[RMDB]
RNA sequence: GGGAACGACUCGAGUAGAGUCGAAAAAUGGCAAAAGGGGACUCGGGUCCGUCGUUCCAUCCUUUUCUUACCUUUUGGCCGGCAUGGCCCCAGCCUCCUCGCUGGCGCCGGCUGGGCAACGAUCCGACGACUAAGCAGUUCGCUGCUUAGAAAAGAAACAACAACAACAAC
Reactivity to DMS in 0.01 (KOAc 150mM, MgCl2 10mM, bicine 150mM(pH8.5), 24C), signal-to-noise 9, nucleotides 027 to 129: a090u060g010g000c030a020a040a100a030g000g000g000g000a090c110u000c060g040g010g000u000c050c110g020u000c030g020u000u020c010c020a030u050c070c010u040u030u030u030c060u020u040a110c040c010u040u010u020u010g000g000c010c000g040g000c050a080u060g060g030c010c100c010c010a050g040c020c100u030c100c060u000c220g030c030u020g000g040c290g020c040c000g010g000c000u000g020g020g000c000a010a020c150g020a090u010c030c010g030a090c090g020a150
Reactivity to 2A3 in 0.01 (KOAc 150mM, MgCl2 10mM, bicine 150mM(pH8.5), 24C), signal-to-noise 9, nucleotides 027 to 129: a000u060g070g010c030a010a020a040a060g030g010g020g020a020c010u010c020g020g000g020u030c040c040g030u020c010g060u040u000c010c000a040u110c010c010u050u100u090u060c050u070u110a160c010c000u040u030u020u050g100g030c000c000g010g000c070a170u200g040g000c020c020c000c000a000g000c000c030u160c030c020u090c090g000c010u010g000g000c010g000c000c000g010g020c010u030g010g010g000c020a050a020c050g040a030u040c030c010g020a020c020g020a020

The record gives the reactivity of an RNA of 170 nucleotides to DMS and 2A3. For DMS, 74,220 sequencing reads were counted. Values cover nucleotides 27 to 129. The RNA was probed in 150 mM KOAc, 10 mM MgCl2 and 150 mM bicine (pH 8.5) at 24 C.